An RNA of 207 nucleotides, treated with DMS and 2A3 and read out base by base.
RNA sequence: GGGAACGACUCGAGUAGAGUCGAAAAUUAAAGUGGCUUUAUGUUUUGAUAAAUGUGAGCUGGUUGAAAAGUAUUUUCCACUGAAUGCAGAGCUUAAUAGAACAUGCUGACAUAAUAGUUUUAAUGCAUUUUGUUGAAAAUGUGUGAACAAACAGAACUGGUAAUGAUGGUUCGCCAUCAUUACCAGAAAAGAAACAACAACAACAAC
Reactivity to DMS in 0.01 (KOAc 150mM, MgCl2 10mM, bicine 150mM(pH8.5), 24C), signal-to-noise 1, nucleotides 027 to 156: u000u000a120a140a220g020u010g040g000c040u000u000u000a070u030g010u010u000u000u010g000a280u000a120a090a080u020g000u010g000a130g020c010u000g010g000u010u010g000a060a140a050a190g020u020a040u000u000u010u010c000c050a210c060u000g020a060a090u000g010c010a140g000a130g000c050u000u010a040a160u000a150g020a090a170c060a130u000g000c050u000g020a030c090a070u010a060a230u010a070g000u000u000u000u010a090a100u020g000c040a030u000u000u000u000g020u010u020g000a060a050a030a030u000g000u020g000u000g000a110a100c090a020a020a060c050a050g060a170a110
Reactivity to 2A3 in 0.01 (KOAc 150mM, MgCl2 10mM, bicine 150mM(pH8.5), 24C), signal-to-noise 1, nucleotides 027 to 156: u030u010a050a010a070g140u080g000g020c050u060u110u160a080u080g070u060u040u200u190g060a090u060a180a120a020u070g060u060g000a050g000c010u020g000g000u130u030g050a000a030a000a030g000u030a070u000u070u000u000c000c000a010c000u000g010a000a030u010g000c020a000g000a000g060c010u140u080a080a000u140a170g060a050a080c060a060u130g000c000u090g140a020c000a000u300a280a070u020a070g030u000u000u020u080a070a030u010g000c000a000u020u000u010u070g020u020u020g000a050a000a000a000u010g030u000g060u070g020a010a000c020a000a140a000c000a010g000a200a060

DMS adducts were read by reverse transcription with MarathonRT.